[RMDB]
RNA sequence: GGGAACGACUCGAGUAGAGUCGAAAAGCAUCCCGCUUCGGCGGGAUGCAAAAGCGAUCGUGUCAUUGCCUCGAACGCAACUCAUAUAAUGAUGGGCUGUGAAAAGUCUGGGCUUCGGCCCAGACAACCUCUGUGUAACGUUCGCGUUACACAGAGGAAAAGAAACAACAACAACAAC
Reactivity to DMS in 0.01 (KOAc 150mM, MgCl2 10mM, bicine 150mM(pH8.5), 24C), signal-to-noise 1, nucleotides 027 to 126: g000c010a020u000c010c000c000g010c000u000u010c190g000g050c000g010g010g020a010u010g010c010a000a040a070a180g000c100g000a060u000c070g010u010g000u000c040a070u000u000g000c010c010u010c080g010a100a240c050g000c020a040a020c010u000c040a040u010a090u020a120a120u010g020a040u000g010g020g070c040u000g040u020g000a070a050a070a090g010u000c000u000g000g000g000c010u000u010c160g010g000c000c000c000a010g000a010c020a020a030
Reactivity to 2A3 in 0.01 (KOAc 150mM, MgCl2 10mM, bicine 150mM(pH8.5), 24C), signal-to-noise 2, nucleotides 027 to 126: g020c000a010u020c030c000c010g070c050u020u040c120g190g010c000g050g000g000a000u020g000c000a010a000a000a010g000c020g020a030u040c030g040u020g050u090c020a100u050u300g070c000c030u030c040g070a110a000c020g060c010a030a060c010u030c030a040u130a010u070a270a300u200g150a020u030g000g010g050c030u040g000u020g140a090a120a050a050g010u010c000u020g000g010g000c040u020u050c240g070g020c000c000c000a000g000a000c010a000a000